Chemical mapping of a 177-nucleotide RNA with 2A3 and DMS. Values are in units of 0.01, from 0 to 300, in steps of 10. Values cover nucleotides 27 to 126. The reactions ran in a buffer of 150 mM KOAc, 10 mM MgCl2 and 150 mM bicine (pH 8.5), at 24 C. Source: RMDB libraries RFM100 and RFMREP, as collected in RNAgym.
[RMDB]
RNA sequence: GGGAACGACUCGAGUAGAGUCGAAAACGCUGCCCGUGCAGGGUUUUCUGAGCGGGAUGAAAAAAUCAGACAAAUAUCCAAGUUAUGAGUAAUUACUUUGUUGGAAGGAGGGAGCAGAGCAUAAGGAUAUUUCUAUUCCUUUCGAGGAAUAGAAAUAAAAAGAAACAACAACAACAAC
Reactivity to 2A3 in 0.01 (KOAc 150mM, MgCl2 10mM, bicine 150mM(pH8.5), 24C), signal-to-noise 7, nucleotides 027 to 126: c040g040c050u100g010c000c020c010g020u070g010c040a080g050g050g000u070u060u120u100c020u020g010a020g010c000g000g000g040a050u160g100a050a030a030a010a000a060u100c030a010g040a080c020a020a130a030u110a080u070c040c020a050a020g030u070u060a100u140g040a040g060u110a090a090u040u050a040c030u050u080u110g040u050u070g070g030a070a040g030g010a010g000g010g000a010g000c040a010g010a010g000c020a030u040a120a030g040g020a010
Reactivity to DMS in 0.01 (KOAc 150mM, MgCl2 10mM, bicine 150mM(pH8.5), 24C), signal-to-noise 7, nucleotides 027 to 126: c060g020c060u010g000c020c070c070g020u020g000c020a040g000g010g010u020u020u030u020c020u010g000a140g010c030g020g010g000a080u020g000a000a020a070a090a080a070u010c050a050g000a080c150a050a070a080u020a070u010c030c030a070a080g010u010u020a050u010g000a090g010u000a120a090u020u020a080c060u000u000u010g000u000u010g000g000a060a080g010g010a120g000g000g010a070g010c040a030g000a050g010c090a060u020a060a080g000g010a150